The record gives the reactivity of an RNA of 207 nucleotides to 2A3 and DMS. For DMS, 2,823 sequencing reads were counted. It was measured as part of the RMDB library OK3TST. The reactions ran in a buffer of 150 mM KOAc, 10 mM MgCl2 and 150 mM bicine (pH 8.5), at 24 C.
RNA sequence: GGGAACGACUCGAGUAGAGUCGAAAAAAUAAUUGUAGAGGAAGCAAAGCAGAUCUUGGUGGGUGACAUUGGUGAUACUGUAGAGGACCCCUACACAUCUUUUGUGAAGUUGCUACCUCUGAAUGAUUGCCGAUAUGCUUUGUACGAUGCCACAUAAGUAUCCACUAGUGUUCGCACUAGUGGAUACAAAAGAAACAACAACAACAAC
Reactivity to 2A3 in 0.01 (KOAc 150mM, MgCl2 10mM, bicine 150mM(pH8.5), 24C), signal-to-noise 2, nucleotides 027 to 156: a000a000u190a040a030u090u030g050u060a040g020a020g100g050a040a060g030c050a060a020a000g010c030a010g030a130u050c040u070u080g040g000u010g000g020g010u060g010a010c020a100u020u100g010g000u000g000a010u060a170c010u040g040u090a010g000a040g000g020a110c010c010c000c030u090a020c030a020c000a020u090c060u120u210u150u040g010u020g020a050a080g020u060u030g030c050u060a090c000c010u000c020u030g030a050a030u050g020a030u030u060g000c000c000g050a060u050a030u190g010c000u060u020u040g020u010a030c030g040a020u060g040c010c030a020c040a050u220a160a060
Reactivity to DMS in 0.01 (KOAc 150mM, MgCl2 10mM, bicine 150mM(pH8.5), 24C), signal-to-noise 2, nucleotides 027 to 156: a050a100u020a060a080u000u000g000u110a130g020a060g000g020a150a190g000c040a120a050a180g010c060a070g000a020u000c060u010u000g020g040u010g020g000g040u000g020a050c040a100u000u030g010g030u010g010a080u000a080c050u000g030u000a050g020a080g130g040a200c060c060c050c000u000a150c040a030c000a040u000c140u000u000u010u010g030u000g010a120a120g000u000u000g000c040u020a090c050c000u000c010u000g010a060a070u000g010a060u010u000g010c000c030g000a090u010a100u000g000c050u020u020u010g010u000a100c050g000a070u000g000c020c030a070c040a030u000a060a180